An RNA of 177 nucleotides, treated with 2A3 and DMS and read out base by base.
For DMS the reverse transcriptase was MarathonRT.
The RNA was probed in 150 mM KOAc, 10 mM MgCl2 and 150 mM bicine (pH 8.5) at 24 C.
Reactivities are given for positions 27 through 126.
RNA sequence: GGGAACGACUCGAGUAGAGUCGAAAAGCUAGGCAUUUCGAUGCCUAGCGAGCGCAGAGUCUAUGCAUCUCUGAAUCAGACAACAGCCGUGUCUAUGCGUGGGAGUAUCCCUCUUCGGAGGGAUAAACGCAAACAGGCAAUUCGUUGCCUGUUUGCGAAAAGAAACAACAACAACAAC
Reactivity to 2A3 in 0.01 (KOAc 150mM, MgCl2 10mM, bicine 150mM(pH8.5), 24C), signal-to-noise 1, nucleotides 027 to 126: g000c000u000a020g010g000c000a000u000u030u140c210g080a000u000g000c010c000u000a000g000c010g000a020g020c040g000c020a000g010a010g070u030c030u090a140u150g070c000a150u040c020u000c010u060g140a080a100u140c040a030g050a050c040a090a010c000a070g070c010c050g090u020g040u000c030u040a070u110g040c020g010u030g000g070g000a080g010u030a000u040c010c000c030u000c000u010u040c140g060g000a000g000g000g020a010u000a020a020a000
Reactivity to DMS in 0.01 (KOAc 150mM, MgCl2 10mM, bicine 150mM(pH8.5), 24C), signal-to-noise 2, nucleotides 027 to 126: g010c000u000a020g000g030c010a000u000u010u000c130g020a030u000g000c000c000u000a000g000c000g010a050g020c130g010c010a020g000a090g010u010c060u010a100u000g010c140a120u000c000u000c040u010g000a060a090u020c090a040g000a040c030a040a060c050a090g010c080c050g010u000g000u000c050u010a070u000g000c050g030u000g000g000g030a180g010u000a040u000c000c000c000u000c000u000u020c180g010g000a010g010g000g000a000u000a000a040a070
For 2A3, 1,349 sequencing reads were counted.